RNA sequence: GGGAACGACUCGAGUAGAGUCGAAAAAACCAUUUUCAUAAUGAUGAUUUCACUUAUACCUAUAUGUUUUUUUCUGGCAUCUCUAAUGUUAGGAUGCGAAGUUUAAGUACUCUCCAUUCAAUGAAUACAAUUUUUGACAAUAUCUGAUUAAUCCUCCCAUCACUACUUGCUUCGGCAAGUAGUGAUGAAAAGAAACAACAACAACAAC
Reactivity to 2A3 in 0.01 (KOAc 150mM, MgCl2 10mM, bicine 150mM(pH8.5), 24C), signal-to-noise 2, nucleotides 027 to 156: a000a000c030c010a040u050u080u030u040c080a050u070a160a040u050g070a030u010g020a000u070u130u120c050a040c010u050u080a070u060a140c010c070u140a140u010a240u180g290u110u070u000u000u020u010u050c040u030g130g010c000a000u000c070u000c010u150a190a080u180g080u120u130a060g010g000a010u010g010c020g020a030a010g000u010u060u000a030a000g000u000a000c020u010c010u010c060c020a000u000u010c030a060a040u060g040a100a000u060a120c020a050a060u030u110u090u090u130g040a070c030a080a020u040a090u150c060u080g070a110u090u170a100a040u090c030c070u000c010c020